[RMDB]
RNA sequence: GGGAACGACUCGAGUAGAGUCGAAAAGGGGUCACGUGUCUAGCUCAGGUGGCUCUUGGAUUUACACAGCUGAAGCCUCCACGGCUGUGUUGUCAGAGCCAUAUUGGAGCAAAACACGUGACGGAGGCACCCAAACAGUAUCGUUCGCGAUACUGAAGAUCUUAUAGCAGUUCGCUGCUAUAAGAUCAAAAGAAACAACAACAACAAC
Reactivity to DMS in 0.01 (KOAc 150mM, MgCl2 10mM, bicine 150mM(pH8.5), 24C), signal-to-noise 2, nucleotides 027 to 156: g060g020g030g010u020c000a010c020g040u000g000u010c000u010a300g010c000u010c020a150g100g050u000g010g000c010u000c000u000u010g080g010a040u010u000u000a030c020a000c000a030g000c040u010g030a070a110g030c030c000u000c000c030a300c060g030g000c000u010g040u000g000u000u010g000u010c050a090g010a040g040c000c000a000u000a130u010u000g030g030a040g030c000a030a060a090a020c010a050c020g040u000g000a020c020g030g010a040g050g060c010a170c040c000c040a160a140a290c000a020g020u000a000u000c010g030u000u000c300g000c030g000a030u000a010c000u000g010a100a130
Reactivity to 2A3 in 0.01 (KOAc 150mM, MgCl2 10mM, bicine 150mM(pH8.5), 24C), signal-to-noise 4, nucleotides 027 to 156: g080g010g020g000u010c000a000c000g000u000g000u010c060u090a030g000c000u030c060a130g010g190u020g010g000c000u000c010u020u140g080g010a020u220u150u170a010c010a000c000a000g000c000u020g030a180a010g020c000c000u000c000c010a010c010g010g000c000u000g000u000g000u010u010g000u010c030a030g000a000g010c010c040a030u050a170u070u270g240g010a000g000c000a030a020a000a020c000a000c000g000u000g000a000c000g000g000a010g010g000c000a030c000c000c000a050a070a050c000a010g010u010a000u000c020g010u090u110c270g020c020g080a000u000a000c000u000g000a050a030

The record gives the reactivity of an RNA of 207 nucleotides to DMS and 2A3. The reactions ran in a buffer of 150 mM KOAc, 10 mM MgCl2 and 150 mM bicine (pH 8.5), at 24 C. The data come from the RNA Mapping Database (RMDB), library RNAMAK.